[RMDB]
RNA sequence: GGGAACGACUCGAGUAGAGUCGAAAAACAAGUGGUGGUAGUCCGCCACUCUAAGGGGACGCCUUUAGAAGAAGAGGCUAGGGGGUAUUCCGGUGUGGGAUACUUAGUAAUAUGCAACACUAAUUGCUCAAGGAUAGAUGAUUCGUCAUCUAUCCAAGCUGGUUACUUAGUUCGCUAAGUAACCAGCAAAAGAAACAACAACAACAAC
Reactivity to 2A3 in 0.01 (KOAc 150mM, MgCl2 10mM, bicine 150mM(pH8.5), 24C), signal-to-noise 2, nucleotides 027 to 156: a010c150a160a000g010u010g000g000u030g000g090u010a010g050u010c000c000g000c010c000a000c060u030c000u000a010a010g010g010g000g030a020c050g090c000c000u040u010u010a020g010a080a020g000a010a000g050a070g030g010c020u050a020g040g060g000g000g000u010a040u010u020c060c020g210g000u240g000u210g070g000g000a010u020a030c020u070u060a000g040u060a020a150u150a080u280g010c010a040a000c020a020c170u150a210a070u030u100g010c030u070c150a070a070g020g000a000u000a000g000a000u000g020a010u040u040c110g120u000c060a000u010c000u000a000u010c000c010a020a000